Structure probing data (2A3) for a 207-nucleotide construct. It was measured as part of the RMDB library VIROID. Reactivities are rounded to 0.1 and cut off at 0 and 3.

[RMDB]
RNA sequence: GGGAACGACUCGAGUAGAGUCGAAAAUCUCUCUAUUCUCUUGAAAGAGGAAGGAGCUCUCGAACGCCCUCCCGUUCCCUCGGAUGGGCCGCUUCCGGCGAACGGUCCCGAAUUGGGGAGGGUGGAGAACUCCCGAGAGCUGGGAGACAGAAAGAGACUAGGGAGAAGAGUUCGCUCUUCUCCCUAGAAAAGAAACAACAACAACAAC
Reactivity to 2A3 in 0.01 (KOAc 150mM, MgCl2 10mM, bicine 150mM(pH8.5), 24C), signal-to-noise 1, nucleotides 027 to 156: u020c010u000c000u000c000u010a080u090u000c010u030c040u010u130g150a210a240a130g030a040g020g070a010a040g060g020a010g000c000u000c000u020c040g140a230a080c040g000c000c000c010u000c000c000c000g020u050u060c010c000c000u010c010g130g000a140u150g000g060g020c000c000g010c030u070u040c050c030g200g040c200g070a030a000c000g020g020u070c060c030c030g070a100a130u160u190g070g000g000g040a060g010g000g020u020g000g000a080g000a050a000c010u040c010c020c000g080a050g020a000g010c030u020g000g050g050a010g020a020c090a040g110a040a140a010g090a000g040a020